The data come from the RNA Mapping Database (RMDB), library M2PK90. An RNA of 177 nucleotides, treated with DMS and 2A3 and read out base by base. For 2A3 the reverse transcriptase was SuperScript II with manganese. For 2A3, 1,380 sequencing reads were counted. DMS adducts were read by reverse transcription with MarathonRT. The reactions ran in a buffer of 150 mM KOAc, 10 mM MgCl2 and 150 mM bicine (pH 8.5), at 24 C.

RNA sequence: GGGAACGACUCGAGUAGAGUCGAAAAUCAUUGGCUUCGCUGCGCGCUGCGUUGCCUAGGCUUCAGAUGCUUCGUACUGUUGCCAACGUUGCAAUUUCCAAAGGCUAAUGCGAAAGUGUGCAAACAAUGAUCUUGCAAGGUUCGCCUUGCAAGAUCAAAAAGAAACAACAACAACAAC
Reactivity to DMS in 0.01 (KOAc 150mM, MgCl2 10mM, bicine 150mM(pH8.5), 24C), signal-to-noise 2, nucleotides 027 to 126: u000c060a050u020u000g000g010c060u010u010c040g070c050u000g030c030g000c000g040c030u000g030c010g020u020u000g010c000c030u010a210g000g000c070u010u020c030a060g010a200u000g020c100u000u010c050g000u010a120c060u000g010u000u000g010c020c010a090a150c090g010u010u010g020c060a030a070u000u000u000c030c010a080a130a090g000g010c040u010a050a070u000g030c020g020a080a050a080g000u000g000u010g020c040a110a120a120c190a070a080
Reactivity to 2A3 in 0.01 (KOAc 150mM, MgCl2 10mM, bicine 150mM(pH8.5), 24C), signal-to-noise 1, nucleotides 027 to 126: u100c030a040u030u120g000g000c000u000u030c080g030c080u100g000c050g000c000g030c030u030g000c010g030u000u010g010c020c010u020a040g000g000c020u070u060c010a040g060a160u070g010c000u060u120c040g060u050a080c020u100g080u110u040g030c000c000a050a000c090g050u000u070g020c060a080a080u000u090u000c000c000a030a060a020g060g000c090u150a110a000u120g050c030g030a030a010a030g050u030g010u020g040c040a020a100a050c020a040a140